An RNA of 177 nucleotides, treated with DMS and 2A3 and read out base by base. For DMS, 1,820 sequencing reads were counted. The RNA was probed in 150 mM KOAc, 10 mM MgCl2 and 150 mM bicine (pH 8.5) at 24 C. The 2A3 profile rests on 739 reads. It was measured as part of the RMDB library OK1LIB. In probing experiments dimethyl sulfate is read out at A N1 and C N3, which are open when not base-paired.
[RMDB]
RNA sequence: GGGAACGACUCGAGUAGAGUCGAAAAGCAAUCAAUUUAUCAAACGACUGCAUGUCACUAAAUCGACAUGAGUGAUGUUUGAAAUCGUUACUUGAAAAAGCAAAUAUAGUUUGCUAUAUUAAAAUUAAAACUAGCAUCCAUUCGUGGAUGCUAGUUUAAAAGAAACAACAACAACAAC
Reactivity to DMS in 0.01 (KOAc 150mM, MgCl2 10mM, bicine 150mM(pH8.5), 24C), signal-to-noise 2, nucleotides 027 to 126: g010c090a030a060u040c040a140a040u010u010u010a050u010c000a000a000a000c000g010a050c060u090g020c000a000u000g010u060c000a170c050u050a050a120a150u090c170g020a030c000a030u000g000a030g000u000g000a060u080g000u000u020u000g000a030a060a020u060c130g000u010u000a130c060u000u000g000a050a020a180a030a100g010c010a010a010a040u020a130u030a120g010u000u000u000g010c000u000a030u060a080u070u000a020a060a070a100u020u000a040
Reactivity to 2A3 in 0.01 (KOAc 150mM, MgCl2 10mM, bicine 150mM(pH8.5), 24C), signal-to-noise 3, nucleotides 027 to 126: g140c010a030a040u090c040a070a080u080u190u140a280u050c000a020a000a000c000g050a010c000u110g060c180a000u000g000u000c000a040c120u240a220a120a180u300c180g010a000c000a000u050g010a000g000u080g170a300u160g030u000u040u000g020a040a060a000u050c020g120u100u210a090c020u130u110g050a180a000a020a000a020g050c070a010a010a050u190a030u040a300g170u020u060u010g020c000u020a080u020a060u140u230a120a010a050a050u060u100a000